About this RNA:
An RNA of 177 nucleotides, treated with 2A3 and DMS and read out base by base. The RNA was probed in 150 mM KOAc, 10 mM MgCl2 and 150 mM bicine (pH 8.5) at 24 C. The DMS profile rests on 2,360 reads. It was measured as part of the RMDB library VIROID. 2A3 is a SHAPE reagent: it acylates the 2'-hydroxyl of flexible nucleotides of all four kinds. For 2A3 the reverse transcriptase was SuperScript II with manganese. The 2A3 profile rests on 2,010 reads.
RNA sequence: GGGAACGACUCGAGUAGAGUCGAAAAUUCGUCCUUUAAUCGUUCCUCCAAGGGACCCUACCCCAAUCCCUUACUUAUGUAAGAAAGGAUCGGCGAGUGUACCGUUUCGUCCUUUCGGACUCAUCAGCAUCAUUUGAAGGUUCGCCUUCAAAUGAUGAAAAGAAACAACAACAACAAC
Reactivity to 2A3 in 0.01 (KOAc 150mM, MgCl2 10mM, bicine 150mM(pH8.5), 24C), signal-to-noise 2, nucleotides 027 to 126: u110u070c070g030u050c030c000u120u070u150a080a060u070c010g010u000u020c000c020u000c010c040a020a030g010g010g010a050c090c000c030u110a110c000c000c000c000a000a040u010c000c020c000u040u040a050c010u080u080a080u110g040u030a060a000g000a040a020a000g020g010a020u080c060g000g030c010g010a040g080u250g090u110a080c020c010g010u050u050u140c030g000u000c000c010u000u000u010c020g000g030a050c040u070c050a100u030c020a020g000
Reactivity to DMS in 0.01 (KOAc 150mM, MgCl2 10mM, bicine 150mM(pH8.5), 24C), signal-to-noise 3, nucleotides 027 to 126: u010u010c110g000u000c040c010u000u010u000a050a140u010c020g010u000u000c000c000u000c110c120a090a040g000g000g020a030c080c060c030u000a300c040c010c010c030a150a150u000c000c000c000u010u000a080c080u010u000a070u000g020u000a070a120g000a030a020a020g020g010a020u000c140g020g010c050g000a110g010u010g030u000a080c050c020g000u000u010u000c090g020u000c000c010u010u000u000c030g010g010a110c110u000c050a030u010c110a070g000